[RMDB]
RNA sequence: GGGAACGACUCGAGUAGAGUCGAAAAGCCACCUUCCGCUCAGACCGGCGCGGAGGUGUAGCGAUAGGACAGCAGCGUUUUCACCAGGAAGGUGAUCUGGGUGGCCGAGCGCGCAUCCACGCGCAUGGUACUAUUAUAUCUUCGGAUAUAAUAGUACAAAAGAAACAACAACAACAAC
Reactivity to 2A3 in 0.01 (KOAc 150mM, MgCl2 10mM, bicine 150mM(pH8.5), 24C), signal-to-noise 9, nucleotides 027 to 126: g020c000c000a020c000c000u080u050c010c000g040c010u060c050a090g050a290c030c070g040g000c020g000c070g020g010a020g000g010u020g010u020a040g000c010g050a080u110a090g040g020a020c020a040g040c010a010g010c060g050u040u040u070u070c030a030c010c000a030g170g130a160a090g070g040u070g030a030u000c020u060g130g020g030u020g020g000c020c020g030a040g030c010g000c000g000c010a050u020c020c010a020c020g010c000g000c010a020u090g070
Reactivity to DMS in 0.01 (KOAc 150mM, MgCl2 10mM, bicine 150mM(pH8.5), 24C), signal-to-noise 9, nucleotides 027 to 126: g000c040c010a030c010c010u000u010c010c000g000c020u010c090a130g010a110c150c100g010g010c200g010c070g010g010a040g010g010u000g000u010a040g010c020g000a120u010a080g010g010a060c060a060g010c040a050g010c230g010u000u000u010u000c020a040c020c010a160g010g010a100a090g010g020u000g000a040u010c050u000g000g000g010u000g000g010c040c050g010a110g010c020g010c010g000c030a130u010c050c090a110c050g010c010g010c030a110u010g010

Structure probing data (2A3 and DMS) for a 177-nucleotide construct. Conditions: 150 mM KOAc, 10 mM MgCl2 and 150 mM bicine (pH 8.5), 24 C. It was measured as part of the RMDB libraries RFM100 and RFMREP. High 2A3 reactivity points to a flexible backbone, as in loops and unpaired stretches.